[RMDB]
RNA sequence: GGGAACGACUCGAGUAGAGUCGAAAACCUGUGCGGCGCGUGAAGCGCUGGGCAUUCAGUUUGCGGGAGUUACUGAACGAUGCCAUUGGACGCGAGCAGUUCACCAAGUUCUUGGAGAAGGAGUACAGCUUUUAGCCCCAUUCGUGGGGCUAAAAGCAAAAGAAACAACAACAACAAC
Reactivity to DMS in 0.01 (KOAc 150mM, MgCl2 10mM, bicine 150mM(pH8.5), 24C), signal-to-noise 1, nucleotides 027 to 126: c010c000u000g070u000g010c050g030g080c000g000c000g030u000g000a100a230g000c000g010c010u000g000g000g120c000a000u000u010c160a170g000u000u010u000g040c080g000g010g010a140g030u000u050a040c030u000g010a070a100c150g030a080u000g000c040c060a170u000u000g000g030a060c150g000c080g000a080g070c160a090g050u000u000c020a120c040c010a030a080g020u000u000c030u000u000g000g020a100g000a100a040g030g000a090g010u000a060c250a170